Conditions: 150 mM KOAc, 10 mM MgCl2 and 150 mM bicine (pH 8.5), 24 C. Structure probing data (DMS and 2A3) for a 177-nucleotide construct. For 2A3, 663 sequencing reads were counted. High DMS reactivity at an A or C suggests that its Watson-Crick edge is free. DMS adducts were read by reverse transcription with MarathonRT. The DMS profile rests on 473 reads. Source: RMDB library OK2TRN, as collected in RNAgym. 2A3 adducts were read by reverse transcription with SuperScript II with manganese.
[RMDB]
RNA sequence: GGGAACGACUCGAGUAGAGUCGAAAAAUCUGAGAACAAAUAUUGACUCCAGAGGACAGGUACCUGAUGUGCUUACUAAGUAUCUGAAUAGGUACCACCUACAACAGCUGAUCUUAGUUUAAGCAAGCUCCGUCGUAAUUUUCGAAUUACGACGGAGAAAAGAAACAACAACAACAAC
Reactivity to DMS in 0.01 (KOAc 150mM, MgCl2 10mM, bicine 150mM(pH8.5), 24C), signal-to-noise 1, nucleotides 027 to 126: a110u010c010u000g000a150g000a080a300c040a140a130a080u060a070u000u010g030a150c020u000c020c030a110g000a070g000g000a140c190a080g030g000u000a030c030c010u000g000a100u000g010u000g010c010u000u010a060c210u000a050a040g030u000a020u020c000u000g000a120a130u010a000g070g010u000a070c060c100a040c000c020u000a080c210a040a070c190a020g000c170u010g000a140u000c070u000u000a090g000u000u000u000a090a060g040c080a060a190g000
Reactivity to 2A3 in 0.01 (KOAc 150mM, MgCl2 10mM, bicine 150mM(pH8.5), 24C), signal-to-noise 1, nucleotides 027 to 126: a000u040c050u040g000a020g020a230a080c060a170a250a100u250a110u140u040g030a010c020u030c060c070a030g040a000g010g090a000c020a130g040g020u030a010c000c000u000g040a070u010g010u040g050c010u020u000a240c040u180a120a000g000u050a040u150c000u050g070a100a060u070a090g040g000u020a060c000c010a020c000c010u010a010c010a170a010c000a000g110c040u050g000a050u060c020u050u010a010g050u000u110u000a040a040g010c020a010a000g010